RNA sequence: GGGAACGACUCGAGUAGAGUCGAAAAUCUCAUGCUCUGCCGUGUCACCUAGGCCACGUAUAGCGGGAUCCCCGUGUAUGAGAUGUAGGUCCGUUCUUAUUUGGUCGCGGAUGCGCGCUCAUGACGAGGAGAGUUUAUAUUUCGAUAUAAACUCUCCAAAAGAAACAACAACAACAAC
Reactivity to DMS in 0.01 (KOAc 150mM, MgCl2 10mM, bicine 150mM(pH8.5), 24C), signal-to-noise 7, nucleotides 027 to 126: u000c030u000c030a130u000g010c050u000c060u000g020c190c040g010u000g010u000c050a110c100c080u000a130g010g010c070c020a040c080g010u000a070u000a070g020c020g010g010g000a120u000c030c020c010c030g020u000g010u010a030u000g000a060g010a060u000g030u000a080g010g000u000c010c020g010u000u010c050u010u000a130u000u000u010g010g010u010c140g010c030g000g000a060u000g000c090g000c040g010c010u000c020a030u000g000a060c080g000a180
Reactivity to 2A3 in 0.01 (KOAc 150mM, MgCl2 10mM, bicine 150mM(pH8.5), 24C), signal-to-noise 4, nucleotides 027 to 126: u010c010u000c020a070u150g020c000u020c020u070g070c080c040g030u020g040u060c030a070c070c060u060a110g110g000c030c000a020c020g050u060a030u060a080g030c000g030g000g030a150u110c030c000c010c000g020u030g040u040a050u050g060a070g020a090u100g020u060a070g040g050u000c010c010g020u060u020c030u090u210a300u150u130u140g060g010u090c050g010c020g050g020a060u140g260c020g000c000g000c020u030c010a020u040g040a010c040g030a050
Chemical mapping of a 177-nucleotide RNA with DMS and 2A3. High 2A3 reactivity points to a flexible backbone, as in loops and unpaired stretches. The RNA was probed in 150 mM KOAc, 10 mM MgCl2 and 150 mM bicine (pH 8.5) at 24 C. For DMS, 13,731 sequencing reads were counted. For 2A3 the reverse transcriptase was SuperScript II with manganese.